Chemical mapping of a 170-nucleotide RNA with 2A3 and DMS. For DMS, 18,745 sequencing reads were counted. The data come from the RNA Mapping Database (RMDB), library 15KLIB. Values are in units of 0.01, from 0 to 300, in steps of 10.
RNA sequence: GGGAACGACUCGAGUAGAGUCGAAAACAACGGGGCUAGCUGCCGGGUGUUCCACCUACGGGAACGGUGCCGAGUGAGGCUUAUCCCGGGGGGUAGCGCUCCGUGCCCUUCCAUAGCACUGGGGUCCAAAGGUAUGCGUUCGCGCAUACCAAAAGAAACAACAACAACAAC
Reactivity to 2A3 in 0.01 (KOAc 150mM, MgCl2 10mM, bicine 150mM(pH8.5), 24C), signal-to-noise 7, nucleotides 027 to 129: c100a010a020c000g010g000g010g000c010u040a060g010c020u050g020c000c000g020g030g030u150g030u090u060c030c010a080c000c020u100a110c030g000g000g000a100a020c100g100g070u100g000c000c000g040a070g080u240g120a100g010g020c000u070u090a130u070c010c010c010g000g000g000g050g000g020u030a000g000c010g000c020u020c010c000g020u010g000c000c000c000u030u050c020c020a110u080a040g010c020a020c090u040g020g000g000g060u020c010c000a070a040a050
Reactivity to DMS in 0.01 (KOAc 150mM, MgCl2 10mM, bicine 150mM(pH8.5), 24C), signal-to-noise 2, nucleotides 027 to 129: c080a160a080c000g040g010g020g040c020u000a070g030c020u030g040c000c020g000g000g000u080g020u000u000c030c030a140c060c060u030a090c000g050g030g030a040a070c150g000g060u040g000c000c030g020a130g050u050g010a100g000g050c000u020u080a120u030c050c000c030g010g000g000g000g000g010u040a010g030c050g000c040u040c000c030g010u000g000c020c020c020u050u010c040c050a090u060a100g020c070a050c000u040g020g000g010g030u000c050c010a030a070a050